RNA sequence: GGGAACGACUCGAGUAGAGUCGAAAACCUACUCAAUACGUCCUCGUCGUACAGAACAGUAACAUGUUUUCCGAACAUCCGCGCUUGGGUAUACGAGUAUACACCUUACCCAACCCUCGCCAACGGGAGUGCAUCCACGAGUUCGCUCGUGGAUGAAUAGCCUAUUGGUGUUCGCACCAAUAGGCUAAAAAGAAACAACAACAACAAC
Reactivity to 2A3 in 0.01 (KOAc 150mM, MgCl2 10mM, bicine 150mM(pH8.5), 24C), signal-to-noise 1, nucleotides 027 to 156: c010c000u000a020c080u000c070a070a080u060a160c050g010u010c060c010u030c030g020u010c000g010u060a010c080a090g020a070a000c010a060g010u020a110a040c020a140u070g010u020u050u030u010c080c010g040a070a010c030a120u020c010c010g080c020g030c000u040u050g000g070g000u020a070u010a060c090g030a020g080u000a010u050a110c120a030c010c010u010u010a030c010c040c000a030a180c000c000c000u050c070g000c020c030a000a090c000g000g010g020a060g070u080g070c000a000u000c000c000a000c010g000a000g060u110u060c180g030c080u010c000g000u010g000g000a000u020g000a000a000
Overview: The data come from the RNA Mapping Database (RMDB), library M2RFPK. An RNA of 207 nucleotides, treated with 2A3 and read out base by base. The 2A3 profile rests on 684 reads. For 2A3 the reverse transcriptase was SuperScript II with manganese.